Chemical mapping of a 207-nucleotide RNA with 2A3. The 2A3 profile rests on 966 reads.
RNA sequence: GGGAACGACUCGAGUAGAGUCGAAAAGAUAUGGAUCAGGACUUCGCUUGGAUUUAUGGGUCAGUAUGUAUGUCGGAAACGACAUAUGCAUGGCCCAUUGUCAGCGAAGAUUCCUGAUCCUAAGUCAAAUCGAUCAAAUCUUCGGAUUUGAUCGAAACCCUCUACCACCGUUCGCGGUGGUAGAGGGAAAAGAAACAACAACAACAAC
Reactivity to 2A3 in 0.01 (KOAc 150mM, MgCl2 10mM, bicine 150mM(pH8.5), 24C), signal-to-noise 1, nucleotides 027 to 156: g010a020u060a000u100g010g000a020u000c000a000g020g000a000c000u000u000c000g010c040u110u160g290g000a070u170u300u060a030u040g000g000g000u010c020a010g040u070a070u080g060u000a000u000g000u010c000g030g000a130a000a050c040g000a000c000a000u010a000u020g020c080a140u010g000g030c010c010c000a000u020u000g000u000c000a000g000c040g000a000a000g000a000u000u010c000c000u060g000a000u010c000c000u000a000a000g000u000c040a030a030a120u030c000g010a000u000c000a010a010a010u000c000u110u090c300g070g000a000u000u000u000g000a000u020c000g000a000a000a000
The RNA was probed in 150 mM KOAc, 10 mM MgCl2 and 150 mM bicine (pH 8.5) at 24 C. Reactivities are given for positions 27 through 156.